An RNA of 177 nucleotides, treated with DMS and 2A3 and read out base by base. The RNA was probed in 150 mM KOAc, 10 mM MgCl2 and 150 mM bicine (pH 8.5) at 24 C. It was measured as part of the RMDB libraries RFM100 and RFMREP. Values cover nucleotides 27 to 126.
RNA sequence: GGGAACGACUCGAGUAGAGUCGAAAACCGGUUUCGACAGGGCGGGCAAUGGUGAGCAGGCAACCCGAGAGGCGACGGACGUAAUCCGCGCAAAUCCACAAACGCCAACGAUGAGCGUUUCGCUGUAGCAUGUCCUAUAUUUCGAUAUAGGACAUGCAAAAGAAACAACAACAACAAC
Reactivity to DMS in 0.01 (KOAc 150mM, MgCl2 10mM, bicine 150mM(pH8.5), 24C), signal-to-noise 6, nucleotides 027 to 126: c020c020g010g010u020u010u010c020g010a090c110a080g000g000g020c050g000g000g000c060a060a060u010g000g030u000g020a070g000c030a060g000g010c070a080a110c060c030c010g000a080g010a100g010g000c020g010a090c060g000g000a040c120g010u030a060a220u000c020c030g000c010g000c040a060a030a070u020c050c050a070c120a020a060a050c040g020c010c020a070a130c210g010a110u020g000a120g020c020g000u000u000u000c080g010c110u020g000u010a160
Reactivity to 2A3 in 0.01 (KOAc 150mM, MgCl2 10mM, bicine 150mM(pH8.5), 24C), signal-to-noise 5, nucleotides 027 to 126: c000c000g020g000u040u060u040c020g020a030c000a070g010g030g020c020g010g000g000c040a040a030u070g060g000u090g040a010g030c030a010g060g010c030a050a070c010c010c030g050a050g010a040g060g020c040g020a110c010g040g000a010c020g040u070a100a050u030c000c000g000c000g000c050a040a030a080u050c050c020a050c020a080a050a000c010g000c000c030a080a050c080g120a150u160g040a020g020c000g020u010u040u040c090g000c030u040g010u050a020